RNA sequence: GGGAACGACUCGAGUAGAGUCGAAAACAGCUUUCGAGCUGAAUAUAACCUUUGUGUAAAGCAGGCCAUGGGAGAACGACUCGGUCCCAUUGGGACCGACCGUUCAUCGAUCAUGGUAUUGGCUUUACACUCUGGUGCUACCACCCUUCGGGGUGAAUGCGUAUAGAUUUUUCGAAAUCUAUACGCAAAAAGAAACAACAACAACAAC
Reactivity to 2A3 in 0.01 (KOAc 150mM, MgCl2 10mM, bicine 150mM(pH8.5), 24C), signal-to-noise 6, nucleotides 027 to 156: c010a020g010c020u110u160u290c270g100a010g000c010u040g050a170a040u300a060u060a110a040c000c000u010u000u000g000u010g000u000a010a000a010g010c010a010g110g000c000c000a000u000g030g010g020a020g000a010a000c000g020a020c020u000c010g000g030u010c030c000c070a240u280u300g000g000g000a000c000c000g000a000c000c010g010u000u020c010a080u120c020g050a100u090c000a000u000g010g000u020a090u020u110g100g000c000u000u000u000a000c000a000c000u000c000u000g000g000u020g020c020u120a140c050c050a010c010c000c010u020u080c270g090g000g000g000u030g010a060a050
Reactivity to DMS in 0.01 (KOAc 150mM, MgCl2 10mM, bicine 150mM(pH8.5), 24C), signal-to-noise 3, nucleotides 027 to 156: c000a040g000c010u010u000u010c240g030a050g030c000u000g010a110a080u000a110u000a090a110c020c010u000u000u000g020u010g010u000a010a010a030g040c020a110g000g000c010c000a010u000g000g000g020a120g010a000a020c010g010a100c030u000c000g030g060u000c000c010c010a300u000u010g070g030g020a010c010c000g000a000c020c000g020u000u000c010a100u000c130g010a120u000c010a020u000g010g000u010a020u000u000g060g010c000u000u000u000a020c010a010c020u010c050u000g000g010u000g010c070u010a130c060c000a040c000c000c000u000u000c260g040g010g020g010u000g010a080a070